[RMDB]
RNA sequence: GGGAACGACUCGAGUAGAGUCGAAAACAGAACAUUGUGGACGUGCAGUACUUGUACGGGGUAGGGUCAAGCAUCGCGUCCUGGGCCAUUAAGUGGGAGUACGUCGUUCUCCUGUUCCUCCUGCUUGCCAGGCCCAGACAUUCGUGUCUGGGCCUGGAAAAGAAACAACAACAACAAC
Reactivity to 2A3 in 0.01 (KOAc 150mM, MgCl2 10mM, bicine 150mM(pH8.5), 24C), signal-to-noise 2, nucleotides 027 to 126: c040a080g160a060a020c060a060u160u170g070u000g050g010a030c000g000u000g000c020a010g050u220a110c060u120u140g120u080a030c060g060g000g000g000u100a060g110g100g000u110c040a050a000g000c000a070u110c180g000c040g060u000c000c000u020g000g010g060c010c030a090u130u130a090a000g050u060g000g000g020a010g010u070a020c130g050u030c000g010u020u000c030u000c000c030u060g060u080u000c000c000u010c000c000u060g050c050u070u080g030